[RMDB]
RNA sequence: GGGAACGACUCGAGUAGAGUCGAAAAGGGCCAGCUGCGCGUUGUUAGAGGAGAACCGUGAUGCGGAACACCGUUCCACAGCACUGCAUGCAUCGCGGGCAACAGGCAGCCGAAAACGCGUAGAGCGAUUACGCUCAUAGUUCGCUAUGAGCGUAAUAAAAGAAACAACAACAACAAC
Reactivity to DMS in 0.01 (KOAc 150mM, MgCl2 10mM, bicine 150mM(pH8.5), 24C), signal-to-noise 8, nucleotides 027 to 126: g000g010g010c030c030a170g010c020u000g000c000g010c040g010u000u010g010u030u010a120g010a240g000g000a150g010a100a100c010c020g030u000g000a010u000g000c000g010g020a030a030c050a140c230c180g000u010u000c010c030a170c150a110g020c080a110c080u010g000c070a100u030g000c010a000u000c000g000c000g000g010g010c060a050a070c150a080g000g010c050a090g010c020c020g000a100a050a030a040c020g000c010g020u020a040g000a090g010c090g010
Reactivity to 2A3 in 0.01 (KOAc 150mM, MgCl2 10mM, bicine 150mM(pH8.5), 24C), signal-to-noise 8, nucleotides 027 to 126: g050g020g050c010c020a050g020c030u030g000c060g010c020g010u000u030g190u100u160a070g020a080g120g040a070g030a100a020c000c000g000u010g010a010u010g000c020g020g030a050a010c230a160c130c220g030u030u000c020c020a060c020a040g090c050a030c110u150g010c050a110u140g000c000a000u000c000g000c000g000g010g020c010a050a040c000a010g130g020c030a020g020c000c000g040a060a030a010a000c010g000c000g020u030a020g020a000g100c030g010

Chemical mapping of a 177-nucleotide RNA with DMS and 2A3. The DMS profile rests on 23,211 reads. Values cover nucleotides 27 to 126. It was measured as part of the RMDB library OK1LIB. For 2A3, 10,326 sequencing reads were counted.